This 177-nucleotide RNA was probed chemically with DMS and 2A3. DMS adducts were read by reverse transcription with MarathonRT. The reactions ran in a buffer of 150 mM KOAc, 10 mM MgCl2 and 150 mM bicine (pH 8.5), at 24 C.

[RMDB]
RNA sequence: GGGAACGACUCGAGUAGAGUCGAAAAUUAAAGUACGUAGAAGCGGCGUGAAGCAUGUAGAAAGCUUUGCGAGCAUAUCGAGCUACAUCUGAGCGAAAGCGGUUACGUACAACGAUAUGCAAAAAAACAGGAGAAGUGGAUUCGUCCACUUCUCCUGAAAAGAAACAACAACAACAAC
Reactivity to DMS in 0.01 (KOAc 150mM, MgCl2 10mM, bicine 150mM(pH8.5), 24C), signal-to-noise 2, nucleotides 027 to 126: u000u000a030a130a130g010u010a010c000g010u000a030g010a070a110g010c000g000g010c060g030u000g010a150a010g020c300a020u000g010u000a050g010a080a100a070g030c070u000u000u010g000c100g020a210g010c030a010u000a040u000c030g020a100g030c000u000a030c020a020u000c030u000g020a250g000c010g020a060a060a100g020c000g020g020u020u000a010c020g000u000a000c000a040a050c100g000a020u000a020u000g020c010a000a020a030a020a080a040a080
Reactivity to 2A3 in 0.01 (KOAc 150mM, MgCl2 10mM, bicine 150mM(pH8.5), 24C), signal-to-noise 1, nucleotides 027 to 126: u040u010a080a000a050g010u000a010c030g010u000a020g040a190a020g070c040g240g030c050g050u000g000a010a000g000c070a020u050g000u050a040g070a100a170a030g030c090u040u030u150g130c130g030a020g010c010a020u010a030u060c020g020a020g080c010u050a050c010a040u020c020u020g040a010g000c000g060a120a000a000g000c010g000g000u050u050a020c000g000u020a010c000a000a000c000g010a000u020a020u090g000c000a030a030a030a030a030a020a020